[RMDB]
RNA sequence: GGGAACGACUCGAGUAGAGUCGAAAAACAUACACUCGCGAGGAGAUUAUCCAGAUGGAGCGCGCCAUCUGCACCGCGCUGUCGUUCCGGCUGACUGUUCCGACGCCCUUCCCGUUCGCCUCGCGCGGCGGUAGGAUAUCUUCGGAUAUCCUACCGCAAAAGAAACAACAACAACAAC
Reactivity to DMS in 0.01 (KOAc 150mM, MgCl2 10mM, bicine 150mM(pH8.5), 24C), signal-to-noise 3, nucleotides 027 to 126: a070c060a060u000a120c150a190c010u000c030g010c040g000a040g010g000a100g020a110u010u050a060u010c280c020a030g030a060u020g000g060a050g000c050g020c050g020c030c070a070u000c020u020g030c030a110c030c030g000c010g000c000u020g010u010c020g000u000u000c020c060g010g010c030u020g000a140c040u000g000u000u000c050c070g000a150c150g020c010c020c010u010u010c010c020c030g040u020u010c040g020c040c000u000c040g030c000g000c160g000
Reactivity to 2A3 in 0.01 (KOAc 150mM, MgCl2 10mM, bicine 150mM(pH8.5), 24C), signal-to-noise 5, nucleotides 027 to 126: a000c000a030u230a040c050a010c040u040c010g000c020g020a030g060g020a070g020a070u130u130a070u130c050c010a020g030a050u090g050g030a080g060c050g010c020g030c030c000a040u020c020u070g010c040a030c030c010g020c000g030c080u040g040u050c020g030u060u000c010c030g020g020c010u040g030a100c010u020g070u110u060c020c030g010a020c040g020c000c010c000u040u020c010c000c000g040u080u080c040g000c010c000u040c030g020c020g000c030g080